[RMDB]
RNA sequence: GGGAACGACUCGAGUAGAGUCGAAAAUUAUCUACGCUAUCCCACUUGAGUAUGGCCAUUCAACUCAAAGUCCGCGAGGAAUGGUAAGAAUCACACAAGCUAGGUUUCAGGAAAUUGUGCAGCAGGCUAUUAGGGAGAAUCAGUAGUGUCACAAGCAACGGCCUAUAAAUUUCGAUUUAUAGGCCGUAAAAGAAACAACAACAACAAC
Reactivity to DMS in 0.01 (KOAc 150mM, MgCl2 10mM, bicine 150mM(pH8.5), 24C), signal-to-noise 2, nucleotides 027 to 156: u000u020a070u000c010u000a120c040g020c020u000a200u020c020c030c010a210c080u020u000g000a080g020u000a080u000g030g020c010c170a090u010u000c010a060a040c000u000c030a060a100a120g000u000c090c030g040c210g010a130g020g020a050a010u000g000g020u000a040a090g010a130a120u020c040a080c060a140c060a070a070g000c030u000a070g010g010u020u000u000c020a180g010g010a030a070a100u010u020g040u000g010c050a080g040c070a060g000g020c020u000a120u010u000a150g010g010g010a090g000a020a050u010c010a120g020u010a070g010u000g000u020c050a130c030a070a080g040c060a110
Reactivity to 2A3 in 0.01 (KOAc 150mM, MgCl2 10mM, bicine 150mM(pH8.5), 24C), signal-to-noise 1, nucleotides 027 to 156: u230u100a120u000c060u040a000c100g000c170u030a170u080c060c000c000a010c060u090u140g030a000g060u210a100u180g090g010c040c000a000u000u030c060a120a300c070u000c000a000a000a000g040u090c110c020g020c030g010a060g000g060a000a000u090g050g050u040a100a000g060a100a040u070c000a030c000a000c000a090a060g090c000u040a000g000g000u000u150u210c090a040g050g040a000a000a140u120u100g040u030g000c060a120g000c000a010g100g000c010u030a060u140u180a010g020g020g000a010g120a010a040u020c000a030g010u110a010g020u140g000u060c010a000c030a200a000g000c000a010
This 207-nucleotide RNA was probed chemically with DMS and 2A3.